[RMDB]
RNA sequence: GGGAACGACUCGAGUAGAGUCGAAAAGUGUCAGUGUCACACUCUGUCUCACUCACAGAGAGACUCAGACUGUGAGUGUGACACAGUGACAGAGUCACUGUGUCUGUGACACACUGAGUGAGUGUGAACUCAAGAUGGUUUUCGAACCAUCUUGAGUAAAAGAAACAACAACAACAAC
Reactivity to DMS in 0.01 (KOAc 150mM, MgCl2 10mM, bicine 150mM(pH8.5), 24C), signal-to-noise 8, nucleotides 027 to 126: g020u000g000u010c060a090g000u010g000u000c000a030c010a060c070u000c090u000g000u000c090u010c020a020c010u000c060a020c020a020g010a090g000a120g000a100c040u000c030a070g010a180c040u000g010u000g000a040g010u010g010u000g000a010c000a010c010a010g010u000g000a010c000a240g010a190g010u000c000a010c000u000g010u000g000u000c030u000g010u000g000a050c020a050c080a090c080u010g000a050g000u000g010a040g020u000g010u010g010a100
Reactivity to 2A3 in 0.01 (KOAc 150mM, MgCl2 10mM, bicine 150mM(pH8.5), 24C), signal-to-noise 5, nucleotides 027 to 126: g170u120g100u090c050a010g030u030g030u080c010a010c000a000c010u160c080u150g100u040c010u010c050a010c000u020c000a020c010a000g040a000g010a020g020a090c020u000c070a060g020a160c020u010g000u010g020a000g000u020g020u000g000a000c000a000c010a000g000u000g000a020c030a070g290a040g080u000c000a000c000u000g010u000g010u010c030u020g040u020g000a010c000a000c000a020c080u050g030a040g090u070g030a040g020u080g040u050g070a040